[RMDB]
RNA sequence: GGGAACGACUCGAGUAGAGUCGAAAAAAGAUAUUGAUAAAUAAGGUAUGCCCAUUGGACAUGCCUGAUGGGAUUUUAAUUAACAUCUGCCUUUGACAACUGAAACAACUGAAGGGAGGGAGAGGUACAUGACUUUUGCAGAGCACAUAUUAUGACAAGUCAUUACUACGUUCGCGUAGUAAUGACUAAAAGAAACAACAACAACAAC
Reactivity to 2A3 in 0.01 (KOAc 150mM, MgCl2 10mM, bicine 150mM(pH8.5), 24C), signal-to-noise 3, nucleotides 027 to 156: a030a000g150a030u230a080u100u120g020a030u090a170a060a010u100a060a030g010g000u020a020u050g010c000c020c010a010u020u190g000g000a040c050a060u080g010c020c000u000g020a060u040g000g000g020a000u020u080u030u200a170a130u120u100a100a030c020a080u060c040u050g000c000c000u080u030u080g070a090c100a130a020c060u120g030a060a040a040c040a020a030c040u050g060a080a010g020g000g010a040g030g020g020a050g000a000g000g000u030a050c000a040u110g040a060c000u000u120u150u050g060c060a030g030a020g120c060a010c030a070u130a080u190u060a080u130g040a030c010a050
Reactivity to DMS in 0.01 (KOAc 150mM, MgCl2 10mM, bicine 150mM(pH8.5), 24C), signal-to-noise 1, nucleotides 027 to 156: a080a070g000a140u000a060u010u000g000a140u000a030a020a060u000a140a040g000g020u000a010u020g020c010c020c040a290u000u000g090g000a040c000a020u000g030c080c010u000g000a060u010g020g040g000a080u010u010u000u000a040a080u000u010a010a130c070a030u000c050u000g000c040c090u010u000u020g000a120c020a080a130c040u000g030a080a090a050c060a060a180c040u000g000a090a100g000g000g010a150g000g060g000a080g010a030g000g010u000a050c030a110u000g020a130c050u000u000u000u000g020c070a100g000a090g020c070a040c080a130u000a090u000u000a060u000g000a250c070a130